Conditions: 150 mM KOAc, 10 mM MgCl2 and 150 mM bicine (pH 8.5), 24 C. The record gives the reactivity of an RNA of 177 nucleotides to DMS and 2A3. For DMS, 1,300 sequencing reads were counted. It was measured as part of the RMDB library M2PK50. DMS adducts were read by reverse transcription with MarathonRT.

RNA sequence: GGGAACGACUCGAGUAGAGUCGAAAAACAUUAAGUUUCGACUUAAUGUAAAGCCGAUGAAGCGGCACAUACGGAGCUUCAUACAUCUAAGAGUGCAAAUAAAAAGUUGAUCCUUCGGGAUCAACAAUCAGUAAAACAACUUCGGUUGUUUUACUGAAAAAGAAACAACAACAACAAC
Reactivity to DMS in 0.01 (KOAc 150mM, MgCl2 10mM, bicine 150mM(pH8.5), 24C), signal-to-noise 2, nucleotides 027 to 126: a030c010a000u000u000a000a000g010u000u000u020c180g000a040c000u000u000a000a000u000g010u010a050a100a150g000c030c030g010a090u000g000a010a010g000c020g000g000c050a040c050a070u000a070c100g020g010a110g010c010u000u000c000a030u000a110c130a080u010c090u010a090a070g020a080g000u000g000c010a130a100a070u030a090a060a070a140a140g010u000u000g000a000u000c010c000u000u020c250g040g000g020a000u000c000a000a000c000a060a080
Reactivity to 2A3 in 0.01 (KOAc 150mM, MgCl2 10mM, bicine 150mM(pH8.5), 24C), signal-to-noise 3, nucleotides 027 to 126: a000c000a000u000u010a010a010g020u010u040u160c120g080a010c000u010u000a000a000u000g000u020a090a030a000g040c000c010g020a030u050g010a010a010g030c010g060g080c070a020c000a050u300a030c060g190g010a010g030c000u020u010c010a010u050a080c030a050u070c040u130a100a060g090a020g130u030g040c020a030a100a070u140a080a160a050a050a020g000u010u000g010a000u000c020c000u030u070c290g100g000g000a000u000c000a000a000c010a000a010